[RMDB]
This 177-nucleotide RNA was probed chemically with 2A3. Values cover nucleotides 27 to 126. 2A3 adducts were read by reverse transcription with SuperScript II with manganese.

RNA sequence: GGGAACGACUCGAGUAGAGUCGAAAACCAUCACUAACACGUGUUUCAAUUAGAACAAACAGAGAGCUUCCAUCACAGACCGACUUUAACCUUGCCGUUCACCACCGAUUCCGGUGACAAGAGUCAUACAGCUAACACCGUUCGCGGUGUUAGCUGUAAAAGAAACAACAACAACAAC
Reactivity to 2A3 in 0.01 (KOAc 150mM, MgCl2 10mM, bicine 150mM(pH8.5), 24C), signal-to-noise 1, nucleotides 027 to 126: c000c010a000u000c000a020c020u020a050a000c000a060c220g020u000g020u070u030u030c100a080a050u220u100a140g030a160a000c000a160a000a000c030a090g300a000g080a050g050c010u000u090c000c000a110u090c000a000c000a170g010a050c000c000g000a040c000u100u070u040a090a090c000c000u010u010g000c000c000g000u090u070c070a090c000c000a000c000c000g030a030u040u000c110c050g030g000u000g000a000c000a140a130g050a000g000u000c000a000u000